[RMDB]
Conditions: 150 mM KOAc, 10 mM MgCl2 and 150 mM bicine (pH 8.5), 24 C. The record gives the reactivity of an RNA of 177 nucleotides to 2A3 and DMS. The DMS profile rests on 2,956 reads. DMS (dimethyl sulfate) methylates the pairing face of unpaired adenines and cytosines. The 2A3 profile rests on 4,522 reads.
RNA sequence: GGGAACGACUCGAGUAGAGUCGAAAAGACGGUACGCCAAUCACCUACCACACGAUGGGCAACUACUACGCCAACGCCAUGCCCGCGUUGAUGAUGAUGAUCGAAAUGUGGAAGCAGAUCGGCGUCAAGCCUCCAUACUGUUCGCAGUAUGGAGGCUAAAAGAAACAACAACAACAAC
Reactivity to 2A3 in 0.01 (KOAc 150mM, MgCl2 10mM, bicine 150mM(pH8.5), 24C), signal-to-noise 5, nucleotides 027 to 126: g050a010c110g020g060u120a010c080g010c020c020a010a030u040c020a050c010c000u070a110c010c000a020c010a010c010g030a040u090g010g040g030c000a110a030c040u290a030c030u020a020c070g080c030c020a030a000c010g010c020c000a150u250g010c020c040c010g030c020g020u030u010g010a040u020g020a040u030g010a020u040g030a040u040c010g040a080a080a090u060g000u010g020g020a090a030g000c030a030g010a060u020c010g000g000c010g000u000c020a040
Reactivity to DMS in 0.01 (KOAc 150mM, MgCl2 10mM, bicine 150mM(pH8.5), 24C), signal-to-noise 2, nucleotides 027 to 126: g040a170c090g000g000u020a040c130g030c010c000a060a050u000c040a180c300c010u040a300c030c000a060c090a070c110g020a030u010g000g010g000c010a110a040c110u000a100c220u030a100c050g000c000c050a030a020c040g020c000c090a070u000g000c040c070c040g000c000g000u010u000g000a100u000g010a070u010g000a050u000g000a080u060c000g020a030a020a140u040g000u000g000g040a060a130g040c070a050g000a070u010c000g010g000c000g000u010c000a060
The data come from the RNA Mapping Database (RMDB), library OK1LIB.